RNA sequence: GGGAACGACUCGAGUAGAGUCGAAAAUGGCAAGCCGAAUAUGGUAUCUCCUUGAAAGUGAGAGAAACAGUUGCAUUUAGAAGGGGAAUUCACCUAGCAGGUUAAGGAAAUGGCCCAAAUGGAGAUCUCUAAUCCCCAUGCCUGUUUUUAAGUUGCCGUGUACCCUUCGAUUCGUCGAAGGGUACACAAAAGAAACAACAACAACAAC
Reactivity to 2A3 in 0.01 (KOAc 150mM, MgCl2 10mM, bicine 150mM(pH8.5), 24C), signal-to-noise 1, nucleotides 027 to 156: u030g050g030c050a020a020g030c020c000g250a090a110u240a000u080g000g070u040a110u000c070u000c070c000u010u220g100a300a260a120g000u090g000a090g000a000g070a050a010a010c020a050g100u140u080g050c000a030u130u080u220a130g080a220a110g070g000g020g150a000a070u120u050c040a020c000c030u050a010g110c140a000g030g090u070u160a050a020g030g030a080a000a290u190g000g010c000c060c070a090a200a000u160g000g000a060g070a090u030c030u030c000u130a050a090u000c090c020c000c000a000u100g000c000c010u000g020u030u070u000u000u000a100a060g070u040u080g040c070c000
Chemical mapping of a 207-nucleotide RNA with 2A3. Source: RMDB library OK3TST, as collected in RNAgym. 2A3 adducts were read by reverse transcription with SuperScript II with manganese. 2A3 is a SHAPE reagent: it acylates the 2'-hydroxyl of flexible nucleotides of all four kinds. Values cover nucleotides 27 to 156. Conditions: 150 mM KOAc, 10 mM MgCl2 and 150 mM bicine (pH 8.5), 24 C.